[RMDB]
RNA sequence: GGGAACGACUCGAGUAGAGUCGAAAAUAAAAAGAUCGAAAGAUCAAAAGGCGUUCAUGUUGUCGACCUUCACGUGGUGAGCGCUGUCAACUGACUGCUGUCAGGUUAACAGACAACAAAUAAAAAAUCAACUAAUCAACUUCGGUUGAUUAGUUGAAAAAGAAACAACAACAACAAC
Reactivity to DMS in 0.01 (KOAc 150mM, MgCl2 10mM, bicine 150mM(pH8.5), 24C), signal-to-noise 2, nucleotides 027 to 126: u000a030a010a060a180a090g010a010u010c000g010a130a070a250g010a010u000c000a050a050a090a070g020g000c020g040u000u000c010a030u000g000u010u010g020u000c010g000a020c010c010u000u010c250a090c290g010u010g000g000u000g000a010g010c050g010c010u000g000u000c110a110a120c000u000g000a010c000u010g020c260u000g040u000c010a010g000g000u000u010a010a000c000a040g000a010c020a090a000c010a070a130a020u040a060a010a140a190a040a070
Reactivity to 2A3 in 0.01 (KOAc 150mM, MgCl2 10mM, bicine 150mM(pH8.5), 24C), signal-to-noise 1, nucleotides 027 to 126: u150a000a050a010a000a000g000a000u010c000g020a040a000a050g010a010u000c050a040a000a000a090g020g000c000g010u010u000c020a020u030g000u030u020g000u020c010g000a010c000c020u110u110c120a080c160g130u150g000g000u000g020a010g000c000g010c000u010g070u020c000a050a060c000u000g010a010c020u150g120c100u130g170u010c000a010g030g020u030u010a000a000c000a020g020a000c000a000a000c000a000a030a000u090a000a020a010a000a000a000
An RNA of 177 nucleotides, treated with DMS and 2A3 and read out base by base. For DMS the reverse transcriptase was MarathonRT. Conditions: 150 mM KOAc, 10 mM MgCl2 and 150 mM bicine (pH 8.5), 24 C. Source: RMDB library M2PK90, as collected in RNAgym.